[RMDB]
RNA sequence: GGGAACGACUCGAGUAGAGUCGAAAAUAAUAAUAGGAUUCAGGAGAAACAAACAUGUAACGCGCGAAGCUUUGUCUUUUUUUUCCCUUCCUGAUUCUGAAACGACUAUCGGUUGCGCGCUAAAUAAGAUUACAUAUUACUUCGGUAAUAUGUAAUCAAAAGAAACAACAACAACAAC
Reactivity to 2A3 in 0.01 (KOAc 150mM, MgCl2 10mM, bicine 150mM(pH8.5), 24C), signal-to-noise 3, nucleotides 027 to 126: u040a010a020u130a060a070u060a130g000g000a020u060u040c010a000g020g010a020g110a070a160a030c090a060a130a000c030a090u190g050u170a090a010c030g000c000g010c020g040a030a010g020c020u060u070u050g020u000c040u100u080u030u000u000u010u030u000c010c000c000u030u010c000c000u000g000a000u000u020c010u020g050a050a090a030c070g040a020c030u060a040u220c110g070g010u040u050g040c000g010c010g020c020u070a070a070a080u150a080a030
Reactivity to DMS in 0.01 (KOAc 150mM, MgCl2 10mM, bicine 150mM(pH8.5), 24C), signal-to-noise 6, nucleotides 027 to 126: u010a060a120u010a120a150u000a160g010g000a020u000u000c010a010g000g010a080g010a100a070a070c130a060a070a090c130a080u010g000u010a060a070c110g010c010g010c010g000a070a100g000c060u000u000u000g000u000c010u000u000u000u000u000u000u000u000c000c000c010u000u000c000c000u000g000a010u000u000c010u000g010a040a050a060c140g010a050c060u000a060u010c110g010g010u000u000g010c000g010c000g010c030u000a030a060a090u010a080a120
Source: RMDB library M2PK90, as collected in RNAgym. An RNA of 177 nucleotides, treated with 2A3 and DMS and read out base by base. The reactions ran in a buffer of 150 mM KOAc, 10 mM MgCl2 and 150 mM bicine (pH 8.5), at 24 C. 2A3 adducts were read by reverse transcription with SuperScript II with manganese. The 2A3 profile rests on 4,006 reads. For DMS the reverse transcriptase was MarathonRT.